[RMDB]
RNA sequence: GGGAACGACUCGAGUAGAGUCGAAAAUAGUCGGUCAAUCGAUUGACCACAACUGCGGUCGUGUGUGGUUGCAGUUGCGUAUACGGCGCCGGUUGGCGUACUGGUUACAGUCGACACUAACCAAUUGUGGCUAUGAUGCCGAUCACAUGCGUACACGAUACGAUGCGAAUUUCGAUUCGCAUCGUAUAAAAGAAACAACAACAACAAC
Reactivity to 2A3 in 0.01 (KOAc 150mM, MgCl2 10mM, bicine 150mM(pH8.5), 24C), signal-to-noise 2, nucleotides 027 to 156: u080a010g130u080c050g020g000u020c040a080a060u120c090g250a170u020u020g040a010c020c010a000c010a000a010c030u090g010c040g050g000u010c020g020u050g090u100g050u100g090g000u010u060g000c000a020g000u040u030g000c040g010u100a090u010a090c030g030g000c000g010c030c000g200g020u080u230g020g010c010g010u000a080c000u040g040g000u030u060a070c040a050g000u090c000g020a040c030a050c100u110a070a090c070c000a140a070u100u040g150u150g030g000c010u050a090u150g140a060u220g000c030c000g000a060u090c020a040c000a060u150g080c020g050u110a000c140a000c030g060

Chemical mapping of a 207-nucleotide RNA with 2A3. The RNA was probed in 150 mM KOAc, 10 mM MgCl2 and 150 mM bicine (pH 8.5) at 24 C. Values cover nucleotides 27 to 156. For 2A3 the reverse transcriptase was SuperScript II with manganese.